RNA sequence: GGGAACGACUCGAGUAGAGUCGAAAAUACGCUCAAAAACCCACGCCAGCACAAACAGCAAGAUGGCCGACAGCGCGUUGAGCAGCGCCAUAUUCAUUAUCAGCCCGCCGAUAUGGGACAGUAACACGAAAAUGGAGGUGUUCGCACCUCCAUUUUCAAAAGAAACAACAACAACAAC
Reactivity to DMS in 0.01 (KOAc 150mM, MgCl2 10mM, bicine 150mM(pH8.5), 24C), signal-to-noise 2, nucleotides 027 to 126: u000a120c070g010c020u000c050a060a070a010a120a130c050c080c010a080c100g000c030c030a090g000c020a050c130a120a090a100c130a050g010c060a120a030g000a030u010g000g050c000c040g000a030c130a110g000c070g000c030g000u010u010g010a030g060c020a100g010c000g050c000c080a060u000a070u010u000c080a030u020u010a050u030c050a010g050c020c040c040g040c000c040g030a060u000a030u010g000g000g010a060c160a070g010u010a050a130c180a100c120
Reactivity to 2A3 in 0.01 (KOAc 150mM, MgCl2 10mM, bicine 150mM(pH8.5), 24C), signal-to-noise 2, nucleotides 027 to 126: u070a010c060g010c000u050c050a000a020a000a120a050c000c020c000a030c020g000c020c000a010g050c080a040c040a060a080a050c040a000g050c020a040a090g090a080u060g060g000c020c090g080a050c010a030g010c000g000c000g020u000u090g040a030g000c010a020g000c030g020c010c010a000u050a130u010u060c010a040u070u150a060u140c020a000g050c040c000c020g000c010c040g020a050u040a160u130g020g010g000a000c000a000g050u060a120a000c030a010c130
Source: RMDB library RFM100, as collected in RNAgym. Chemical mapping of a 177-nucleotide RNA with DMS and 2A3. Values cover nucleotides 27 to 126. 2A3 adducts were read by reverse transcription with SuperScript II with manganese. The 2A3 profile rests on 1,163 reads. The DMS profile rests on 2,205 reads.